[RMDB]
RNA sequence: GGGAACGACUCGAGUAGAGUCGAAAAAGUACCACUGUACGCAGUGGUACAAAGUGCAGAAGAUCCUCGGCAGUUAACUGCAGCCGGAUUUGAGAAAAUUUCGGCAGUUAACUGCCGAAGAAAACAAUGCCUUUUAGAAAUUCGUUUCUAAAAGGCAAAAAGAAACAACAACAACAAC
Reactivity to DMS in 0.01 (KOAc 150mM, MgCl2 10mM, bicine 150mM(pH8.5), 24C), signal-to-noise 3, nucleotides 027 to 126: a130g010u000a000c000c000a020c010u000g000u010a130c160g090c000a010g010u000g000g000u010a000c010a020a040a080g010u010g020c070a120g010a150a100g000a140u000c010c030u010c020g000g000c000a010g000u000u000a000a000c000u010g010c160a100g020c070c050g000g010a010u000u010u000g000a220g000a140a040a010a010u010u000u030c010g000g010c000a010g000u000u000a010a000c010u000g000c000c000g010a000a000g000a060a050a080a080c080a100a110
Reactivity to 2A3 in 0.01 (KOAc 150mM, MgCl2 10mM, bicine 150mM(pH8.5), 24C), signal-to-noise 2, nucleotides 027 to 126: a030g010u000a010c000c000a010c020u030g040u010a020c240g000c090a000g000u020g000g010u000a000c000a000a000a000g070u070g070c050a000g060a280a000g010a130u060c000c020u020c020g000g010c010a020g000u000u000a000a000c000u050g110c030a050g040c020c020g020g010a000u000u000u050g150a160g030a040a110a030a040u020u080u080c000g000g020c000a000g010u000u000a000a010c000u000g000c030c000g000a000a000g000a000a010a000a040c060a010a080
The data come from the RNA Mapping Database (RMDB), libraries RFM100 and RFMREP. Chemical mapping of a 177-nucleotide RNA with DMS and 2A3. The RNA was probed in 150 mM KOAc, 10 mM MgCl2 and 150 mM bicine (pH 8.5) at 24 C. For DMS the reverse transcriptase was MarathonRT. The 2A3 profile rests on 1,025 reads.